[RMDB]
RNA sequence: GGGAACGACUCGAGUAGAGUCGAAAAUACUAAAGACAGCAUUAAUGUUGAUUCUCGCUUAUAUGAGGCAAUCAUUACUGGUGCGUCAGACGAUCUUAAACAAAUGUUUAGUACUGAUCUGUACUCCAUGACUGAAUCUCUUCGGAGAUUCAGUCAUAAAAGAAACAACAACAACAAC
Reactivity to DMS in 0.01 (KOAc 150mM, MgCl2 10mM, bicine 150mM(pH8.5), 24C), signal-to-noise 1, nucleotides 027 to 126: u010a150c100u010a030a210a100g020a070c010a050g020c000a070u000u000a040a090u000g010u000u000g000a040u020u000c020u000c030g010c250u000u000a200u010a170u000g010a020g020g020c090a010a010u030c050a010u010u000a040c130u000g000g010u000g010c040g000u000c010a050g010a080c170g000a030u000c020u000u000a020a020a090c040a070a070a050u060g010u000u000u000a070g000u010a090c180u010g020a040u000c020u000g000u010a030c090u000c170c080
Reactivity to 2A3 in 0.01 (KOAc 150mM, MgCl2 10mM, bicine 150mM(pH8.5), 24C), signal-to-noise 1, nucleotides 027 to 126: u040a030c010u020a070a110a070g060a000c090a080g000c020a040u010u090a220a050u020g020u000u010g080a100u130u030c060u000c000g000c040u300u120a160u040a020u300g030a030g000g010c030a010a010u120c020a020u000u160a040c010u040g000g010u030g040c040g060u020c020a000g020a040c040g020a020u070c000u090u170a000a000a000c010a020a300a040u300g040u090u040u030a000g010u010a090c090u050g040a120u000c040u080g000u010a040c030u000c090c000